[RMDB]
RNA sequence: GGGAACGACUCGAGUAGAGUCGAAAACCUUCGCAUGUCGCGGUGAGGUAGGUUAGGAACAGUGGGCGUCGGACGUCGACGCCGGUGAGCUUGUAGCCGAUCCCCCGGGGCAGAGGGGAGUGGGUGAGGUACUCCCAUCGUUCGCGAUGGGAGUACCAAAAGAAACAACAACAACAAC
Reactivity to DMS in 0.01 (KOAc 150mM, MgCl2 10mM, bicine 150mM(pH8.5), 24C), signal-to-noise 4, nucleotides 027 to 126: c030c010u000u000c050g000c050a180u000g020u010c020g000c020g010g000u010g000a080g030g010u000a070g020g010u000u000a060g000g000a050a040c050a080g020u010g010g010g020c010g020u010c000g010g010a180c300g010u010c010g010a000c000g000c010c010g010g010u010g010a110g020c030u000u010g010u010a040g020c020c000g000a140u010c010c000c010c000c010g010g010g000g020c030a020g000a130g010g010g010g000a050g010u010g010g000g010u000g000a140
Reactivity to 2A3 in 0.01 (KOAc 150mM, MgCl2 10mM, bicine 150mM(pH8.5), 24C), signal-to-noise 4, nucleotides 027 to 126: c040c000u090u070c130g010c040a040u060g010u030c030g010c000g240g040u090g020a140g020g040u060a020g030g040u030u050a050g060g030a060a030c020a090g100u210g040g140g000c010g010u000c020g010g120a300c130g140u300c010g060a000c000g000c000c000g000g050u040g010a030g000c000u080u080g100u100a000g020c010c000g070a240u270c010c000c000c000c000g030g030g030g080c010a010g070a060g000g030g020g020a030g030u140g000g000g020u080g060a050

Chemical mapping of a 177-nucleotide RNA with DMS and 2A3. The RNA was probed in 150 mM KOAc, 10 mM MgCl2 and 150 mM bicine (pH 8.5) at 24 C. 2A3 adducts were read by reverse transcription with SuperScript II with manganese. For DMS the reverse transcriptase was MarathonRT. The DMS profile rests on 6,755 reads. Source: RMDB library OK2TST, as collected in RNAgym.